RNA sequence: GGGAACGACUCGAGUAGAGUCGAAAAGUACCACCUGAAAUGCCUCAGAUCCAAGAUUUGAAAUGUCUUGUCUGAACUGGGGGUCUGUGGCUGGACCCAACUAAAGAUUUGAAACUCACUGAAGAGGUAAACGACCUUAUUUCGAUAAGGUCGUUUAAAAAGAAACAACAACAACAAC
Reactivity to 2A3 in 0.01 (KOAc 150mM, MgCl2 10mM, bicine 150mM(pH8.5), 24C), signal-to-noise 2, nucleotides 027 to 126: g010u030a070c000c020a030c020c070u140g090a100a080a060u250g070c020c000u010c010a000g030a020u060c070c010a020a010g030a040u030u100u290g100a180a240a120u210g000u020c020u070u050g050u000c040u070g010a040a030c050u070g040g000g000g060g040u000c010u030g040u040g020g000c000u010g030g020a020c010c000c000a050a050c050u110a100a110a070g150a140u110u090u210g110a190a050a000c020u050c050a060c130u230g070a130a030g020a060g010g060
Reactivity to DMS in 0.01 (KOAc 150mM, MgCl2 10mM, bicine 150mM(pH8.5), 24C), signal-to-noise 3, nucleotides 027 to 126: g000u010a140c020c020a170c060c130u000g000a040a120a100u010g020c040c010u000c000a010g010a090u010c100c010a030a030g010a020u000u010u010g000a110a140a100u010g000u010c010u010u000g020u000c130u010g000a030a110c110u000g000g010g010g010g010u000c050u010g010u000g000g020c110u000g000g010a090c010c010c020a070a100c200u010a070a080a110g020a130u010u020u000g000a130a080a090c050u010c020a070c100u000g000a090a050g010a050g000g010
Annotation:
An RNA of 177 nucleotides, treated with 2A3 and DMS and read out base by base. The 2A3 profile rests on 1,189 reads. Values cover nucleotides 27 to 126.